[RMDB]
RNA sequence: GGGAACGACUCGAGUAGAGUCGAAAAGCACCGCCGCAGUGCAGCCAACCCCCAACCGCACACACGCUGCCCGAGCCUGCUGCUGUCGCAGUCCUACCCGGUCCGGGGCCGGACCCGGGUAGGCGUAACGCAUAGGAGGAUUCGUCCUCCUAUGCGUAAAAGAAACAACAACAACAAC
Reactivity to DMS in 0.01 (KOAc 150mM, MgCl2 10mM, bicine 150mM(pH8.5), 24C), signal-to-noise 3, nucleotides 027 to 126: g000c030a090c030c050g000c050c070g020c080a070g040u010g020c020a110g000c050c070a060a220c020c010c000c020c020a090a100c110c050g000c070a050c080a100c090a050c080g000c050u010g000c020c020c020g000a090g020c000c030u000g010c020u000g000c030u010g010u000c100g000c100a080g010u000c000c000u000a010c000c000c000g000g000u000c000c000g010g010g040g000c160c020g010g000a020c060c030c030g020g000g010u000a000g010g010c100g010u000a060

Structure probing data (DMS) for a 177-nucleotide construct. DMS adducts were read by reverse transcription with MarathonRT. Values are in units of 0.01, from 0 to 300, in steps of 10. The reactions ran in a buffer of 150 mM KOAc, 10 mM MgCl2 and 150 mM bicine (pH 8.5), at 24 C.